[RMDB]
The record gives the reactivity of an RNA of 207 nucleotides to 2A3. For 2A3 the reverse transcriptase was SuperScript II with manganese. The RNA was probed in 150 mM KOAc, 10 mM MgCl2 and 150 mM bicine (pH 8.5) at 24 C.

RNA sequence: GGGAACGACUCGAGUAGAGUCGAAAAGAGGGAUGCACAGGAAGCUAUGGAGAGCCAAGUAGGAGGCAUCUCAAUCAUGAUUAGGAGAGGGAGGGAAGAGUUCUUGUGGAAAGUAAAUCUAAAGCUGAAUUUUGAAGGGUGAGUAAGUAAAGUAACAGUAAAUAAUGCGUUUCGACGCAUUAUUUACAAAAGAAACAACAACAACAAC
Reactivity to 2A3 in 0.01 (KOAc 150mM, MgCl2 10mM, bicine 150mM(pH8.5), 24C), signal-to-noise 1, nucleotides 027 to 156: g130a010g040g000g000a010u040g080c020a030c040a110g020g010a100a000g030c020u060a100u140g050g010a030g000a000g050c020c050a070a020g040u050a040g040g100a020g100g000c020a090u000c000u000c010a090a130u080c060a080u120g130a110u070u250a070g020g040a130g040a070g020g000g020a170g000g000g010a020a050g050a010g030u090u000c000u000u060g030u040g000g070a080a060a010g020u130a000a100a120u010c060u170a200a010a000g060c000u050g050a050a060u100u070u100u180g130a060a040g020g020g000u000g050a000g010u050a040a020g000u030a090a090a050g000u090a010a050c040a040